[RMDB]
RNA sequence: GGGAACGACUCGAGUAGAGUCGAAAACUGGGGAGGGCUCCAACUGCACAAACUAGCUGUGGGCCACAGAAUGCUUGCUCAGCUCAUUAGCACCUGCUGCUUACAGUGACCAUUCAUCCAACAGACUGGCCGUGAACAAGAUGAUGGGAUCAGCGGGCACCGAUUUCACAUUCGUGUGAAAUCGGUGAAAAGAAACAACAACAACAAC
Reactivity to 2A3 in 0.01 (KOAc 150mM, MgCl2 10mM, bicine 150mM(pH8.5), 24C), signal-to-noise 2, nucleotides 027 to 156: c030u060g010g000g020g010a050g070g000g000c040u060c040c010a120a070c030u040g080c050a020c040a100a250a080c050u160a060g020c040u010g040u100g030g030g000c020c050a040c000a060g100a060a050u100g020c030u080u040g020c000u010c100a020g000c000u000c070a110u120u300a000g040c010a030c000c000u010g010c010u000g020c000u040u080a110c060a090g040u030g170a080c000c010a050u150u160c030a010u010c000c030a030a040c010a160g150a190c010u060g070g000c020c060g060u020g030a080a010c020a060a030g010a020u050g000a000u020g020g000g020a030u040c000a000g020c000g000g020g000